[RMDB]
RNA sequence: GGGAACGACUCGAGUAGAGUCGAAAACACUGCUGGUUAGCUACGUUCGGAAGGGAUAACCGCUGAAAGCAUCUAAGCGGGAAGCCUGUUCCAAGAUGAGGUUUCUCACCCCCUCGAGGGGGUAAGGCUAUCUUAACUCCUUCGGGAGUUAAGAUAGAAAAGAAACAACAACAACAAC
Reactivity to 2A3 in 0.01 (KOAc 150mM, MgCl2 10mM, bicine 150mM(pH8.5), 24C), signal-to-noise 2, nucleotides 027 to 126: c030a000c020u060g020c010u060g000g200u160u120a030g000c050u080a050c060g040u030u060c070g040g000a010a020g000g020g000a010u010a080a060c000c010g010c010u010g070a090a070a020g120c030a050u070c040u090a040a010g000c000g000g020g020a050a040g010c000c000u070g280u080u030c020c020a000a010g030a050u140g070a050g000g070u020u040u020c020u010c020a050c000c000c010c010c000u080c050g070a300g020g000g000g010g020u010a000a010g070g000
Reactivity to DMS in 0.01 (KOAc 150mM, MgCl2 10mM, bicine 150mM(pH8.5), 24C), signal-to-noise 3, nucleotides 027 to 126: c120a130c170u010g010c010u010g010g010u010u000a050g030c010u000a090c090g010u000u000c140g020g030a080a200g000g000g000a030u000a190a290c000c000g000c000u000g000a140a110a130g020c090a050u000c030u000a160a060g000c010g000g000g000a070a090g000c000c010u010g010u000u000c020c010a060a110g010a070u000g010a110g020g000u000u000u000c020u010c080a070c020c000c010c000c020u000c220g000a110g000g000g000g000g000u000a020a040g000g000

Source: RMDB library RFMREP, as collected in RNAgym.
Structure probing data (2A3 and DMS) for a 177-nucleotide construct.
2A3 adducts were read by reverse transcription with SuperScript II with manganese.
The reactions ran in a buffer of 150 mM KOAc, 10 mM MgCl2 and 150 mM bicine (pH 8.5), at 24 C.